[RMDB]
RNA sequence: GGGAACGACUCGAGUAGAGUCGAAAACUCAAUCACUACGGUGAUUGAGAAUGCUUACGCCUCAAUCAAGCUUGAAUAGAGUGCCUCCAGCAGAUAUAGACUGAAACAUUUAGUAUGGUCAAGCAGGGAGCAACAGCUCGAGUACGCUCGAGCUGAAAUCACCCAUGCUGUUCGCAGCAUGGGUGAUAAAAGAAACAACAACAACAAC
Reactivity to 2A3 in 0.01 (KOAc 150mM, MgCl2 10mM, bicine 150mM(pH8.5), 24C), signal-to-noise 1, nucleotides 027 to 156: c010u000c000a000a000u030c000a000c000u020a020c150g140g000u020g000a000u000u010g000a000g020a000a020u080g000c000u020u020a040c000g080c010c000u020c050a010a160u050c040a070a130g080c070u150u050g040a040a050u220a180g050a010g070u110g000c050c000u090c030c000a020g000c000a000g200a000u090a070u050a110g080a020c040u050g060a020a060a180c070a040u070u080u030a040g040u000a040u080g090g010u030c020a020a000g060c010a020g070g000g000a070g030c010a030a050c000a010g000c000u000c000g020a000g000u010a010c110g050c110u000c000g000a000g000c000u000g000a000a000
About this RNA
Chemical mapping of a 207-nucleotide RNA with 2A3. The reactions ran in a buffer of 150 mM KOAc, 10 mM MgCl2 and 150 mM bicine (pH 8.5), at 24 C. It was measured as part of the RMDB library OK3TST.